[RMDB]
RNA sequence: GGGAACGACUCGAGUAGAGUCGAAAAGAAAGGCAGCAAGUGCAGCCCACGCAGAGGCAUGCUUUUGCAUGCCCAGUCGAGCCCACGACUGAGGGCAGCUGCGACACUGAGGGCAGCUGCCGAAAGACACCUCAUAUCAGUUCGCUGAUAUGAGGUGAAAAGAAACAACAACAACAAC
Reactivity to DMS in 0.01 (KOAc 150mM, MgCl2 10mM, bicine 150mM(pH8.5), 24C), signal-to-noise 4, nucleotides 027 to 126: g000a070a100a120g000g000c010a000g020c030a100a070g030u000g010c050a070g020c010c010c060a110c150g010c170a130g000a100g010g000c000a040u000g010c000u000u000u000u010g020c000a040u000g010c000c000c010a010g000u000c000g010a130g000c000c010c020a300c000g000a010c010u000g000a260g000g010g000c030a080g010c010u000g000c010g000a140c130a130c160u000g000a090g010g000g020c010a080g010c010u000g000c000c000g000a030a040a090g010a300
Reactivity to 2A3 in 0.01 (KOAc 150mM, MgCl2 10mM, bicine 150mM(pH8.5), 24C), signal-to-noise 4, nucleotides 027 to 126: g080a010a060a000g020g000c020a000g000c030a060a120g060u110g100c020a000g010c010c030c020a040c070g120c050a040g030a090g140g000c050a080u030g000c010u150u210u170u250g010c030a080u020g000c000c000c000a000g000u000c000g000a020g000c020c000c000a030c020g010a000c010u030g020a060g040g090g000c010a010g000c010u010g000c000g040a030c050a030c120u180g090a230g000g050g000c000a000g010c000u010g000c000c000g010a000a000a000g020a010